[RMDB]
RNA sequence: GGGAACGACUCGAGUAGAGUCGAAAAGGGUCUUUACUAUGCAAUGUGGUUCAGUGACCGUCCUAGACCUCAGCAACGUUUAGCCAAUGAAUUAGGUGAAUUGCAUGGAUUAUAUUUUGAUCCUAAAGCACCUAAUGACGUUCGCGUCAUUAGGUGCAAAAGAAACAACAACAACAAC
Reactivity to DMS in 0.01 (KOAc 150mM, MgCl2 10mM, bicine 150mM(pH8.5), 24C), signal-to-noise 1, nucleotides 027 to 126: g000g040g010u000c010u000u000u020a040c020u020a040u010g000c040a030a040u000g020u010g000g020u000u000c100a170g000u020g010a030c040c070g010u000c040c010u000a070g020a090c150c030u000c040a050g040c160a100a180c110g010u000u010u000a110g050c070c040a100a120u010g040a070a070u000u020a040g040g000u020g000a100a030u000u000g000c020a020u000g000g020a160u010u000a050u010a200u020u020u000u000g010a010u000c000c000u000a070a040a150
Reactivity to 2A3 in 0.01 (KOAc 150mM, MgCl2 10mM, bicine 150mM(pH8.5), 24C), signal-to-noise 2, nucleotides 027 to 126: g040g020g010u010c000u000u080u030a080c020u030a000u040g070c020a040a060u050g000u040g080g050u080u080c080a070g040u060g220a030c020c030g030u040c000c000u050a060g040a080c000c030u000c070a010g040c040a030a060c020g040u120u200u280a060g000c040c030a070a000u040g060a050a080u080u020a060g040g000u110g070a060a040u040u030g020c050a020u050g020g000a110u090u130a160u110a110u180u110u060u140g010a020u020c010c010u050a130a060a020
The record gives the reactivity of an RNA of 177 nucleotides to DMS and 2A3. It was measured as part of the RMDB library OK2TST. The 2A3 profile rests on 1,015 reads. The DMS profile rests on 953 reads. For 2A3 the reverse transcriptase was SuperScript II with manganese. Conditions: 150 mM KOAc, 10 mM MgCl2 and 150 mM bicine (pH 8.5), 24 C.